Chemical mapping of a 177-nucleotide RNA with 2A3 and DMS. It was measured as part of the RMDB library TTRDES. Values cover nucleotides 27 to 126. The RNA was probed in 150 mM KOAc, 10 mM MgCl2 and 150 mM bicine (pH 8.5) at 24 C.
[RMDB]
RNA sequence: GGGAACGACUCGAGUAGAGUCGAAAAGAUAUGGAUCCCUACGCAGCCGAUAAGAAGGUGUCGGAAACGACACUCUUCUUUUGACGGCUGAAAGGGAUCCUAAGUCAAAGUGGUCUUCGGACCACAAGGUAUGACCAAGGUUCGCCUUGGUCAUACCAAAAGAAACAACAACAACAAC
Reactivity to 2A3 in 0.01 (KOAc 150mM, MgCl2 10mM, bicine 150mM(pH8.5), 24C), signal-to-noise 2, nucleotides 027 to 126: g000a030u040a020u120g000g000a000u030c010c000c070u030a040c300g030c020a010g000c000c010g240a140u060a260a000g000a010a000g010g000u000g000u000c000g030g080a080a060a000c040g010a000c010a000c010u200c000u010u000c000u000u020u020u030g060a030c020g000g000c000u000g000a000a000a000g000g030g000a000u000c000c000u000a030a010g000u000c030a030a100a120g030u010g030g020u000c000u060u110c300g110g020a010c050c000a000c000a010a030
Reactivity to DMS in 0.01 (KOAc 150mM, MgCl2 10mM, bicine 150mM(pH8.5), 24C), signal-to-noise 2, nucleotides 027 to 126: g000a060u000a300u000g000g020a010u000c000c000c010u000a100c280g000c020a020g000c030c000g010a280u010a000a020g000a020a010g000g020u000g010u000c000g040g000a110a070a140c000g000a050c000a000c000u000c000u000u000c000u000u010u020u000g010a250c120g000g030c000u000g010a010a010a020g000g000g000a000u000c000c000u000a020a080g020u010c070a090a140a150g030u000g030g030u010c010u020u030c240g070g010a000c000c010a000c030a020a050